An RNA of 207 nucleotides, treated with 2A3 and read out base by base. Source: RMDB library OK3TST, as collected in RNAgym. Conditions: 150 mM KOAc, 10 mM MgCl2 and 150 mM bicine (pH 8.5), 24 C.
[RMDB]
RNA sequence: GGGAACGACUCGAGUAGAGUCGAAAACGCGUGUAGUGACGCAAGCAUCACCGCCGUCGUGACGAAGCACAUACAGGAUGCUCAGCGCAUGCGCGACACCUGCCUGGCCGCCUUGCUCCAAAUGUACCACUCGGUGGGCGCCGUGGAGGGCACGACGCCUCUUGCUGCCUUUCGAGGCAGCAAGAGGAAAAGAAACAACAACAACAAC
Reactivity to 2A3 in 0.01 (KOAc 150mM, MgCl2 10mM, bicine 150mM(pH8.5), 24C), signal-to-noise 1, nucleotides 027 to 156: c050g040c070g000u020g030u050a120g020u030g150a070c000g030c000a000a010g000c000a000u000c000a030c110c000g040c020c030g020u100c000g030u020g070a110c110g070a130a010g030c100a020c050a050u230a060c030a080g100g000a020u010g020c000u050c170a100g000c000g000c010a020u190g010c000g010c000g010a000c000a020c010c000u040g080c000c000u000g050g020c020c010g030c000c000u040u220g000c020u130c070c020a000a120a130u140g010u090a180c060c000a020c040u120c040g030g000u050g020g030g030c010g000c030c000g000u000g000g050a050g020g030g000c060a010c110g070a030c030g000